Chemical mapping of a 207-nucleotide RNA with DMS and 2A3. Source: RMDB library OK3TST, as collected in RNAgym. Conditions: 150 mM KOAc, 10 mM MgCl2 and 150 mM bicine (pH 8.5), 24 C.
RNA sequence: GGGAACGACUCGAGUAGAGUCGAAAAAGGCCGGAAGUUUUCGCAUCGGUCCGCAUUAUGGAAAACGUAGCCCUAGAAACCAUGGCGGAGCAUAGAAACGAUGGCUAAUUUCGCACAACUCGGCAUCCAGAUUGAUUCCAAGCAAGCCGAGGAUGCGCGGAAAAAUGAAGUUCGCUUCAUUUUUCCGAAAAGAAACAACAACAACAAC
Reactivity to DMS in 0.01 (KOAc 150mM, MgCl2 10mM, bicine 150mM(pH8.5), 24C), signal-to-noise 1, nucleotides 027 to 156: a240g010g000c020c020g000g000a150a090g010u000u000u000u000c000g010c070a100u010c080g020g010u000c010c030g000c050a090u000u010a160u000g000g000a150a060a140a130c090g030u000a180g000c020c080c070u000a130g010a130a160a260c030c010a030u000g020g000c010g060g010a100g010c050a130u000a130g000a090a020a020c030g000a270u000g030g000c010u000a040a300u010u000u010c020g000c050a070c010a080a080c000u000c000g010g040c000a190u000c050c040a160g020a190u000u000g000a130u000u000c050c020a050a130g010c040a080a160g030c030c010g000a050g010g020a040u000g040c000g020
Reactivity to 2A3 in 0.01 (KOAc 150mM, MgCl2 10mM, bicine 150mM(pH8.5), 24C), signal-to-noise 3, nucleotides 027 to 156: a000g000g000c010c010g000g010a140a170g010u050u040u060u090c030g030c090a120u120c130g070g100u000c000c000g000c000a130u240u220a020u030g000g000a100a000a060a030c050g020u060a060g130c010c020c020u030a070g040a090a080a000c000c000a000u000g020g030c000g000g000a020g090c040a090u090a130g020a020a040a000c000g010a010u030g000g000c000u000a010a010u010u030u020c020g020c010a010c020a050a290c030u010c000g010g010c020a050u110c070c030a050g020a120u070u150g070a050u210u040c060c020a060a010g050c010a040a070g030c070c000g000a020g000g000a010u030g000c030g000